[RMDB]
RNA sequence: GGGAACGACUCGAGUAGAGUCGAAAACUGUUGAUUUAAGUAUGGAUAAGUUGCGCCGUGUGGAUUGGAAAUCAACCCUACGGUUGUUACUUAUGUUAUGCACAACUAUGGUAUUGUUGUCUUCUGUGGGCAUAAUCCUUCGGGAUUAUGAAAAGAAACAACAACAACAAC
Reactivity to 2A3 in 0.01 (KOAc 150mM, MgCl2 10mM, bicine 150mM(pH8.5), 24C), signal-to-noise 4, nucleotides 027 to 129: c060u080g010u000u020g040a220u000u100u300a160a000g020u030a010u040g000g030a000u020a000a000g000u000u020g040c000g030c000c030g010u070g060u110g020g010a170u000u020g060g030a030a200a100u280c000a010a000c020c000c010u020a000c000g060g000u060u220g000u080u000a010c000u000u020a000u010g070u110u000a000u010g030c020a010c000a080a000c020u150a190u300g090g060u110a070u140u050g080u000u000g030u060c120u020u000c010u060g060u120g030g090g000
Reactivity to DMS in 0.01 (KOAc 150mM, MgCl2 10mM, bicine 150mM(pH8.5), 24C), signal-to-noise 1, nucleotides 027 to 129: c050u020g020u000u000g000a150u000u000u010a120a160g020u020a000u030g000g000a050u000a010a070g040u030u060g040c050g050c000c000g050u030g030u100g000g020a000u000u060g000g000a120a120a110u080c010a020a080c000c000c000u000a000c020g010g080u000u050g040u040u000a000c020u050u010a030u020g010u000u000a030u040g030c060a110c050a060a030c060u040a000u000g010g010u030a130u000u000g060u000u000g050u010c090u050u000c050u000g000u040g030g010g000